[RMDB]
RNA sequence: GGGAACGACUCGAGUAGAGUCGAAAAUGUUGAUGAUCUGUAGUGCUACAGAAAAAUUGUGGGUCACAGUCUAUUAUGGGGUACCUGUGUGGAAGGAAGCAACCACCACUCUAUUUUGUGCAUCAGAAUACGAUGCGAAUUUCGAUUCGCAUCGUAUAAAAGAAACAACAACAACAAC
Reactivity to 2A3 in 0.01 (KOAc 150mM, MgCl2 10mM, bicine 150mM(pH8.5), 24C), signal-to-noise 3, nucleotides 027 to 126: u080g010u000u040g010a100u050g010a040u030c000u000g030u030a030g040u050g060c090u150a020c000a000g140a130a060a000a000a010u110u090g040u050g090g000g080u110c010a010c000a020g020u000c010u010a140u170u160a170u300g090g000g000g000u060a040c000c000u030g040u000g050u040g130g050a070a100g100g030a190a030g090c020a070a060c020c010a030c010c000a000c000u000c010u000a170u050u060u040u000g080u000g020c020a020u000c000a030g040a070
Reactivity to DMS in 0.01 (KOAc 150mM, MgCl2 10mM, bicine 150mM(pH8.5), 24C), signal-to-noise 2, nucleotides 027 to 126: u060g010u000u040g030a090u000g000a110u000c000u000g030u000a040g000u030g010c040u010a060c000a000g000a040a010a040a040a090u010u010g020u000g000g000g030u010c030a030c030a030g040u040c050u000a130u030u030a050u050g000g000g000g030u000a110c180c020u010g010u020g000u030g000g030a140a170g000g020a160a130g020c150a050a160c000c040a170c000c020a000c030u000c020u010a060u000u020u000u000g000u030g000c070a010u020c070a050g000a060
Source: RMDB library OK1LIB, as collected in RNAgym.
This 177-nucleotide RNA was probed chemically with 2A3 and DMS.
The RNA was probed in 150 mM KOAc, 10 mM MgCl2 and 150 mM bicine (pH 8.5) at 24 C.
For 2A3 the reverse transcriptase was SuperScript II with manganese.
2A3 is a SHAPE reagent: it acylates the 2'-hydroxyl of flexible nucleotides of all four kinds.